Source information
This 177-nucleotide RNA was probed chemically with 2A3 and DMS. For 2A3, 1,819 sequencing reads were counted. For 2A3 the reverse transcriptase was SuperScript II with manganese. The RNA was probed in 150 mM KOAc, 10 mM MgCl2 and 150 mM bicine (pH 8.5) at 24 C.

[RMDB]
RNA sequence: GGGAACGACUCGAGUAGAGUCGAAAAUGAAAGUAGUCUCCUGCAGCGUCUGGGGUUUCCGUUGCAGUCCUCGGUACCAGGACCUCGGCGUGGCCUAGCGAGUUAUGGCGACGAAGGCCGUGAAAAAUCUAUUGAAGAGGUUCGCCUCUUCAAUAGAAAAAGAAACAACAACAACAAC
Reactivity to 2A3 in 0.01 (KOAc 150mM, MgCl2 10mM, bicine 150mM(pH8.5), 24C), signal-to-noise 2, nucleotides 027 to 126: u110g030a060a040a080g050u120a010g070u020c030u020c010c000u020g010c010a060g050c000g050u000c040u170g020g030g040g000u040u070u030c040c000g030u040u050g000c040a030g000u050c010c020u040c000g050g040u030a070c050c050a030g000g050a030c020c010u040c010g000g000c030g040u040g000g000c000c010u010a020g020c020g040a000g010u170u080a100u170g040g000c000g000a110c030g050a110a040g100g010c030c000g010u080g020a100a020a000a000a030
Reactivity to DMS in 0.01 (KOAc 150mM, MgCl2 10mM, bicine 150mM(pH8.5), 24C), signal-to-noise 4, nucleotides 027 to 126: u000g010a080a060a130g010u010a100g010u000c030u000c010c010u000g020c080a130g010c050g010u020c050u000g030g010g010g010u000u000u000c080c020g000u000u000g010c080a090g000u000c040c010u000c070g010g010u010a060c080c060a090g010g000a050c040c010u000c050g010g010c040g010u000g010g000c010c030u000a110g020c040g000a100g010u010u010a060u000g010g010c020g020a080c030g010a090a130g010g020c030c020g020u000g000a020a060a060a090a110